[RMDB]
RNA sequence: GGGAACGACUCGAGUAGAGUCGAAAAGACGGAAAAGAUCGAACCUAAGAAGAUCAGGAAGUGUGAGCCGAAUCCUAGGGCUCCUAGGGACGCAUCGUCCGAUGCGAAAUAAACACUAACGUCGAAACAGUAAUAUAGCGUUCGCGCUAUAUUACUGAAAAGAAACAACAACAACAAC
Reactivity to 2A3 in 0.01 (KOAc 150mM, MgCl2 10mM, bicine 150mM(pH8.5), 24C), signal-to-noise 9, nucleotides 027 to 126: g010a000c010g030g060a050a110a020a060g010a030u030c030g020a070a130c000c010u060a080a060g090a070a020g010a080u030c020a020g130g110a060a050g030u050g010u050g020a020g070c070c040g050a060a060u070c010c010u040a040g020g050g090c050u070c030c010u020a020g000g010g030a020c000g000c000a000u010c030g180u090c120c180g000a000u010g000c010g040a020a080a050u180a020a110a000c020a000c020u060a100a010c010g000u000c010g020a050a090a000
Reactivity to DMS in 0.01 (KOAc 150mM, MgCl2 10mM, bicine 150mM(pH8.5), 24C), signal-to-noise 9, nucleotides 027 to 126: g010a020c010g000g020a090a060a110a120g010a010u000c020g010a090a180c120c150u020a110a100g010a130a150g010a010u000c010a100g000g020a090a040g030u000g010u000g010a050g010c050c040g010a100a090u030c020c020u010a060g000g000g020c090u010c010c130u010a050g000g010g010a280c010g000c010a010u000c000g000u050c230c170g000a010u000g000c010g000a060a070a090u030a090a090a040c040a010c020u000a070a110c010g010u000c020g010a090a100a170